Structure probing data (DMS) for a 177-nucleotide construct. DMS (dimethyl sulfate) methylates the pairing face of unpaired adenines and cytosines. It was measured as part of the RMDB library TTRINS. Conditions: 150 mM KOAc, 10 mM MgCl2 and 150 mM bicine (pH 8.5), 24 C. Reactivities are rounded to 0.1 and cut off at 0 and 3.
[RMDB]
RNA sequence: GGGAACGACUCGAGUAGAGUCGAAAAGAUAUGGACGAGCAAAGACAAUAUCAGGAGGGAGAGAAUCGUUCGGAAACGAACGGUUUCUCGAGGAUCUCCUGAGUAUUGUCUUUGCUCGUCCUAAGUCGUACGUUAGAGAGUUCGCUCUCUAACGUACAAAAGAAACAACAACAACAAC
Reactivity to DMS in 0.01 (KOAc 150mM, MgCl2 10mM, bicine 150mM(pH8.5), 24C), signal-to-noise 2, nucleotides 027 to 126: g000a100u010a300u000g000g010a000c010g030a020g010c010a020a010a000g000a020c000a010a010u000a050u000c000a000g000g000a040g020g020g000a020g000a010g010a050a010u010c000g020u000u010c010g000g000a140a100a240c010g000a010a000c000g030g000u000u020u010c000u000c010g020a070g030g010a040u010c000u000c000c010u000g010a020g020u000a000u000u000g000u000c000u000u000u000g020c000u010c000g010u010c000c010u000a000a060g020u010c120